About this RNA
The record gives the reactivity of an RNA of 177 nucleotides to DMS and 2A3. DMS adducts were read by reverse transcription with MarathonRT.
[RMDB]
RNA sequence: GGGAACGACUCGAGUAGAGUCGAAAAAUACAAAAACUGGCAAUGCUAUUUUGAUUGAUGCGGCUGGAAACGACACUACAGUUAAGCAAACGUUGCCUGAAGACGUGAGGAAAGUUCGCUUAAGAAAAGCUAUCGAUAGUUUCGACUAUCGAUAGCUAAAAGAAACAACAACAACAAC
Reactivity to DMS in 0.01 (KOAc 150mM, MgCl2 10mM, bicine 150mM(pH8.5), 24C), signal-to-noise 2, nucleotides 027 to 126: a050u010a120c070a050a090a040a150a050c060u000g000g010c020a020a030u020g000c040u000a100u000u030u000u040g010a110u010u020g000a070u040g000c020g000g020c050u030g030g000a090a080a080c060g000a040c110a050c080u050a110c030a080g000u000u000a010a090g000c070a000a090a100c000g000u010u000g010c020c010u010g030a050a040g010a070c100g000u020g010a050g000g000a080a030a100g000u000u000c070g000c050u000u010a010a100g020a060a040a050
Reactivity to 2A3 in 0.01 (KOAc 150mM, MgCl2 10mM, bicine 150mM(pH8.5), 24C), signal-to-noise 3, nucleotides 027 to 126: a010u120a000c070a010a060a030a080a000c040u000g050g000c020a060a110u120g010c070u100a270u050u090u030u110g200a100u000u190g030a050u090g000c000g000g020c030u060g020g040a160a130a000c090g060a030c040a010c160u120a030c000a050g010u110u050a090a010g010c020a050a000a000c060g070u040u020g010c000c000u030g000a060a000g070a020c130g120u180g070a080g010g070a180a040a040g010u020u030c050g040c030u060u070a070a030g040a050a100a000
2A3 adducts were read by reverse transcription with SuperScript II with manganese. Source: RMDB library OK1LIB, as collected in RNAgym. The reactions ran in a buffer of 150 mM KOAc, 10 mM MgCl2 and 150 mM bicine (pH 8.5), at 24 C.